[RMDB]
RNA sequence: GGGAACGACUCGAGUAGAGUCGAAAAGAUAUGGAAUCUGUCACCUUUUGACGUAUGUCGGAAACGACAAGUACGAUAAGGUGCAGAUUCCUAAGUCAAAAGGGAGUCUUGUUCGCAAGACUCCCAACAUAACCUCCCUCUUCGGAGGGAGGUUAUGAAAAGAAACAACAACAACAAC
Reactivity to 2A3 in 0.01 (KOAc 150mM, MgCl2 10mM, bicine 150mM(pH8.5), 24C), signal-to-noise 2, nucleotides 027 to 126: g020a000u030a020u070g010g020a000a010u020c020u040g300u300c020a030c000c000u110u150u100u280g090a020c010g020u020a010u090g000u030c020g000g000a130a000a110c000g000a000c000a050a110g150u040a010c020g060a100u060a190a180g000g000u000g000c010a010g000a000u000u000c000c000u010a020a010g000u010c000a020a030a040a170g000g000g000a010g010u000c000u030u000g020u050u150c200g050c140a000a000g010a010c000u000c010c000c000a010a000
Reactivity to DMS in 0.01 (KOAc 150mM, MgCl2 10mM, bicine 150mM(pH8.5), 24C), signal-to-noise 2, nucleotides 027 to 126: g000a040u000a300u010g010g000a000a000u000c000u000g010u020c010a010c000c000u000u010u010u010g010a200c110g000u000a010u010g020u010c000g010g010a110a080a190c010g010a000c000a050a070g010u010a000c000g020a140u010a030a010g000g020u000g000c000a000g000a000u010u000c000c000u000a000a090g010u030c040a060a040a150a110g000g000g000a050g000u000c000u000u000g000u000u020c190g020c000a030a000g010a010c000u000c000c000c000a000a010